[RMDB]
Conditions: 150 mM KOAc, 10 mM MgCl2 and 150 mM bicine (pH 8.5), 24 C. The record gives the reactivity of an RNA of 207 nucleotides to 2A3 and DMS. DMS adducts were read by reverse transcription with MarathonRT.

RNA sequence: GGGAACGACUCGAGUAGAGUCGAAAAGAUCUAGAAACACUUGGAUAUUGUAUGAUUAGAUGGUUGGGAGGUAUCUUGCCAUGGACUAAGAUAUCUGAAACAAAGAAUUGUGCAUUAGUAAGUGCCACAAAACAGAAAUAUGUUAACAAUACUGCAACGAAGUAGAGCAGUUCGCUGCUCUACUUCGAAAAGAAACAACAACAACAAC
Reactivity to 2A3 in 0.01 (KOAc 150mM, MgCl2 10mM, bicine 150mM(pH8.5), 24C), signal-to-noise 2, nucleotides 027 to 156: g020a010u060c020u110a080g070a040a150a000c000a050c070u100u100g040g010a060u080a030u100u060g030u070a030u130g090a070u050u100a050g030a110u070g040g040u050u030g070g040g000a010g000g020u040a030u090c000u010u050g000c010c050a060u090g080g020a050c030u040a030a020g000a030u020a000u020c040u050g070a090a030a000c030a000a100a000g030a050a040u020u050g000u020g010c000a000u040u020a060g100u060a120a080g000u030g030c080c010a060c100a030a040a030a000c030a000g080a040a150a030u210a030u110g050u070u010a050a000c010a040a030u020a190c030u090g010c020a070a040
Reactivity to DMS in 0.01 (KOAc 150mM, MgCl2 10mM, bicine 150mM(pH8.5), 24C), signal-to-noise 1, nucleotides 027 to 156: g010a100u010c060u000a110g010a250a160a040c040a050c020u000u000g050g020a140u000a030u000u020g010u000a070u000g010a110u000u000a040g050a180u000g000g040u030u010g040g010g000a100g040g050u000a020u000c000u010u000g000c040c030a090u000g070g030a200c050u000a110a030g030a020u000a010u000c000u000g040a190a080a090c010a070a140a140g020a020a110u000u000g030u000g010c020a070u000u000a080g020u010a070a090g010u010g020c040c020a060c060a010a030a060a120c050a300g000a030a030a070u010a040u000g000u000u000a100a070c070a040a080u000a140c040u000g000c010a020a110

About this RNA:
As a SHAPE reagent, 2A3 marks flexible, mostly unpaired nucleotides at the ribose 2'-OH. 2A3 adducts were read by reverse transcription with SuperScript II with manganese.